RNA sequence: GGGAACGACUCGAGUAGAGUCGAAAAAAGGAAAAACGAGAAAAUGUCGACAGGCAGACUAUAAUAGCCCGCGCUGCCACGGCUGCACACUUCGCUCGCGUGAACCUGACCGGUCAGGGCUUCUACGCGAUUACACAGGGUUCGCCCUGUGUAAUCGAAAAGAAACAACAACAACAAC
Reactivity to 2A3 in 0.01 (KOAc 150mM, MgCl2 10mM, bicine 150mM(pH8.5), 24C), signal-to-noise 1, nucleotides 027 to 126: a000a000g150g110a020a250a060a020a050c110g050a030g080a090a090a070a180u130g010u040c020g010a090c000a050g060g000c010a010g000a030c040u060a040u000a300a210u120a040g020c000c060c060g000c060g010c010u050g000c000c010a010c000g000g000c000u100g000c070a070c040a040c060u060u100c040g000c050u020c030g040c000g050u000g020a040a030c000c040u010g030a060c120c000g130g030u060c010a010g000g040g080c100u060u060c010u010a040c030g000
Reactivity to DMS in 0.01 (KOAc 150mM, MgCl2 10mM, bicine 150mM(pH8.5), 24C), signal-to-noise 2, nucleotides 027 to 126: a090a040g000g000a020a070a060a130a030c090g000a070g000a030a070a080a090u000g000u000c020g000a110c160a050g010g000c020a070g000a080c040u000a110u000a100a100u000a090g040c030c010c040g010c130g000c020u000g000c030c040a080c060g010g010c030u000g010c120a090c060a060c060u010u010c110g000c050u010c040g010c050g000u010g010a040a060c010c000u000g000a100c070c130g050g020u010c050a060g010g010g000c120u000u010c070u000a050c050g000